The record gives the reactivity of an RNA of 177 nucleotides to DMS and 2A3. 2A3 adducts were read by reverse transcription with SuperScript II with manganese. In probing experiments dimethyl sulfate is read out at A N1 and C N3, which are open when not base-paired. The 2A3 profile rests on 24,830 reads. It was measured as part of the RMDB library OK2TST.
RNA sequence: GGGAACGACUCGAGUAGAGUCGAAAAGAAGACUGGAUACAGUCUAAAAAGGCGCAGUGGGCUAGCGCCACUCAAAAGGCCCAUAAAGAAGUGACUAAGUACUAAUGUACUUAGUCGCAAGAGAGAAGUUCUAAGCAUAGUUCGCUAUGCUUAGAGCAAAAGAAACAACAACAACAAC
Reactivity to DMS in 0.01 (KOAc 150mM, MgCl2 10mM, bicine 150mM(pH8.5), 24C), signal-to-noise 8, nucleotides 027 to 126: g010a170a030g000a020c000u000g000g010a270u020a160c010a010g020u000c000u000a040a080a100a140a130g000g000c000g040c010a170g020u010g000g000g010c010u000a120g030c000g010c000c000a040c010u000c020a050a010a030a050g040g030c010c010c000a050u010a060a080a120g010a150a140g020u000g000a020c000u000a010a010g000u000a000c000u010a120a150u020g010u000a000c000u000u000a000g000u000c000g010c020a060a100g010a130g010a110g000a140a130
Reactivity to 2A3 in 0.01 (KOAc 150mM, MgCl2 10mM, bicine 150mM(pH8.5), 24C), signal-to-noise 9, nucleotides 027 to 126: g080a030a000g000a000c000u010g010g010a090u250a300c020a000g000u010c000u020a030a070a020a010a020g010g000c010g000c040a070g080u060g040g000g000c010u020a040g000c010g000c000c010a020c010u020c010a030a040a000a010g030g000c000c000c000a000u060a000a030a020g120a120a030g010u010g010a000c000u000a000a000g010u000a000c020u170a230a230u300g000u000a000c000u020u000a000g000u000c000g000c000a040a040g100a000g010a000g020a210a020